[RMDB]
RNA sequence: GGGAACGACUCGAGUAGAGUCGAAAAGAUAUGGAGUUUGGGAGUUCUCUACCUCGGAGAAGUCAGUGGACUUCGGAAACGAAGUCCACUGAUGGAGAGGUAGGAACGAAGAACAAACUCCUAAGUCCUAAGGGUAAAAGUUCGCUUUUACCCUUAGAAAAGAAACAACAACAACAAC
Reactivity to DMS in 0.01 (KOAc 150mM, MgCl2 10mM, bicine 150mM(pH8.5), 24C), signal-to-noise 4, nucleotides 027 to 126: g010a130u010a290u010g000g010a020g030u000u000u000g000g000g030a270g010u010u000c010u020c010u000a010c010c000u000c000g000g010a240g010a250a270g000u000c000a000g020u000g000g000a020c000u000u000c010g010g000a100a110a250c000g010a030a010g010u000c000c000a000c000u000g000a000u000g000g010a080g010a010g000g010u010a000g010g000a010a010c010g000a080a150g000a170a190c010a010a010a010c000u000c000c000u000a020a090g000u000c040
Reactivity to 2A3 in 0.01 (KOAc 150mM, MgCl2 10mM, bicine 150mM(pH8.5), 24C), signal-to-noise 2, nucleotides 027 to 126: g040a030u180a040u290g000g010a010g010u010u020u010g030g030g010a150g050u000u000c300u010c000u030a000c010c000u030c030g300g300a090g010a070a010g040u030c010a000g020u010g040g010a010c010u010u000c020g040g000a070a070a010c030g020a000a010g010u010c020c000a000c020u000g010a000u010g000g000a030g000a000g000g010u000a000g020g000a000a000c010g000a140a020g030a060a010c000a000a010a000c000u000c000c000u040a180a020g040u020c000